RNA sequence: GGGAACGACUCGAGUAGAGUCGAAAAACUAGUAUGUACAGGGGUGAGUUGACCUGUCAUCUAGACUGCUGACCAUCAACUCACCGGUCAGCUGGAUGAUGUCCACAGAGUACGACAUCAGUCCUCAGUGUAUUGACGAGUUCGCUUGUCGAUACACAAAAGAAACAACAACAACAAC
Reactivity to 2A3 in 0.01 (KOAc 150mM, MgCl2 10mM, bicine 150mM(pH8.5), 24C), signal-to-noise 9, nucleotides 027 to 126: a000c000u010a000g050u130a060u060g070u090a010c010a010g040g030g050g050u140g100a140g060u070u070g100a080c000c010u010g000u000c000a000u000c000u010a020g080a140c050u040g000c000u000g000a000c000c010a050u100c040a050a090c050u030c080a060c030c040g000g000u000c000a000g010c020u020g010g010a010u020g000a000u000g010u000c030c020a060c070a080g120a030g090u110a050c050g000a000c000a000u010c000a010g180u030c000c010u030c030a010
Reactivity to DMS in 0.01 (KOAc 150mM, MgCl2 10mM, bicine 150mM(pH8.5), 24C), signal-to-noise 9, nucleotides 027 to 126: a180c010u000a010g010u040a010u000g000u050a000c010a010g020g000g000g010u010g010a100g010u000u010g000a080c020c020u000g000u000c000a010u010c010u000a020g000a210c070u000g010c010u000g000a010c000c070a170u020c110a050a060c110u010c090a070c180c120g000g000u000c000a010g000c000u020g000g000a100u000g000a010u000g000u000c000c160a150c160a160g000a160g020u030a110c300g000a010c000a000u000c000a030g000u000c000c000u010c210a140